[RMDB]
RNA sequence: GGGAACGACUCGAGUAGAGUCGAAAAAUAGACCAGCAGUAGGACUCAGCGACCGUCACAACAAGGUUGUGCUGGUAUCCGACGGUCGUAUAGCCCUGUCUUGCAGGUUGCCUUGCACUGACGUGCCACACCAUUUACAGAUUCGUCUGUAAAUGAAUCGAUACGGUAUGUUCGCAUACCGUAUCGAAAAAGAAACAACAACAACAAC
Reactivity to 2A3 in 0.01 (KOAc 150mM, MgCl2 10mM, bicine 150mM(pH8.5), 24C), signal-to-noise 3, nucleotides 027 to 156: a000u090a000g010a000c000c000a010g000c010a020g010u080a010g010g000a040c000u010c050a020g010c010g010a000c010c000g020u010c010a040c050a170a100c070a180a170g080g010u050u030g020u120g080c090u050g090g040u030a110u070c030c040g000a000c000g010g000u010c000g000u050a090u070a050g010c000c020c000u020g040u110c050u030u090g010c010a020g030g030u040u090g050c030c010u020u070g000c010a030c030u160g050a050c100g030u020g010c020c010a080c020a020c050c000a000u010u000u000a010c000a010g000a010u020u100c140g080u010c100u000g010u000a000a000a000u000g000a000a070
Reactivity to DMS in 0.01 (KOAc 150mM, MgCl2 10mM, bicine 150mM(pH8.5), 24C), signal-to-noise 1, nucleotides 027 to 156: a090u010a210g000a240c000c010a150g030c080a120g000u020a010g010g010a040c030u000c160a150g000c000g010a040c040c010g000u000c030a210c140a030a120c110a070a080g040g010u020u000g050u000g040c010u000g010g000u000a070u020c100c100g030a030c000g000g000u000c020g050u000a060u000a020g010c010c010c020u000g000u020c000u000u020g040c020a070g000g010u010u020g030c040c170u000u000g040c030a050c060u000g000a100c160g000u010g000c020c040a070c040a150c130c020a030u000u000u000a010c000a000g020a050u000u000c300g000u020c000u000g000u000a010a000a000u000g000a070a130